An RNA of 170 nucleotides, treated with DMS and 2A3 and read out base by base. The RNA was probed in 150 mM KOAc, 10 mM MgCl2 and 150 mM bicine (pH 8.5) at 24 C. For DMS the reverse transcriptase was MarathonRT. 2A3 adducts were read by reverse transcription with SuperScript II with manganese. It was measured as part of the RMDB library 15KLIB. The DMS profile rests on 18,954 reads.
RNA sequence: GGGAACGACUCGAGUAGAGUCGAAAAGGUGUUUGUAAAUAUAAGGGUAAGUUUGUCCAAAUCCCUGCUCAGUGUGUCCGUGACCCUGUGGGAUUUUGUUUGUCAAAUACCCCCUGUAAUGUCUGUCGAAGGAAGUGGUUCGCCACUUCCAAAAGAAACAACAACAACAAC
Reactivity to DMS in 0.01 (KOAc 150mM, MgCl2 10mM, bicine 150mM(pH8.5), 24C), signal-to-noise 6, nucleotides 027 to 129: g060g000u010g000u050u020u000g020u030a050a080a080u000a050u050a040a030g020g000g010u020a050a210g060u030u030u020g020u050c040c060a020a010a030u040c010c010c020u050g040c200u040c050a040g050u000g050u000g040u040c050c170g000u060g040a050c010c030c060u020g020u040g000g010g000a050u000u020u000u060g010u000u030u010g020u020c000a030a020a060u000a300c120c080c000c000c040u060g020u000a070a080u040g020u030c080u020g020u020c000g020a210a160
Reactivity to 2A3 in 0.01 (KOAc 150mM, MgCl2 10mM, bicine 150mM(pH8.5), 24C), signal-to-noise 4, nucleotides 027 to 129: g030g010u020g050u020u150u080g050u040a030a070a030u150a030u070a090a040g000g010g000u000a020a030g070u040u050u050g010u000c030c040a020a000a000u000c000c000c000u010g010c080u030c010a000g020u030g030u040g010u150c060c100g180u160g050a000c000c000c000u000g000u060g020g000g000a010u040u010u010u060g090u070u160u090g030u000c000a000a000a000u020a000c000c070c000c000c000u010g070u130a060a040u050g040u040c050u050g060u070c030g030a080a040